RNA sequence: GGGAACGACUCGAGUAGAGUCGAAAAACAUUCUGGCCAACCCAACCCCACGAUCCUCCAUCGGCAUGAUCAUGAUGUGUUCUCAAAUAUCAGGCCAGUAAAUCACCAUGCUCGUGCUGGUAAAGGCAACUUAUGCCCAAGUUCGCUUGGGCAUAAAGACUUCCAUGAAGUUCGCUUCAUGGAAGUCAAAAGAAACAACAACAACAAC
Reactivity to 2A3 in 0.01 (KOAc 150mM, MgCl2 10mM, bicine 150mM(pH8.5), 24C), signal-to-noise 1, nucleotides 027 to 156: a000c070a090u110u010c010u000g020g020c000c000a030a020c030c000c000a010a040c030c000c000c010a040c060g060a220u100c010c000u040c060c020a040u080c010g000g000c010a020u010g000a010u000c000a000u000g030a010u070g050u010g010u090u010c070u050c050a110a070a060u160a090u050c130a070g000g000c000c000a000g000u000a000a060a070u150c000a010c050c000a000u010g020c020u010c010g020u020g010c020u010g010g000u060a130a090a030g000g000c020a040a040c010u040u000a000u000g000c000c000c000a040a000g000u000u050c050g010c190u000u010g020g000g020c000a000u000a000a000a000
This 207-nucleotide RNA was probed chemically with 2A3. For 2A3, 836 sequencing reads were counted.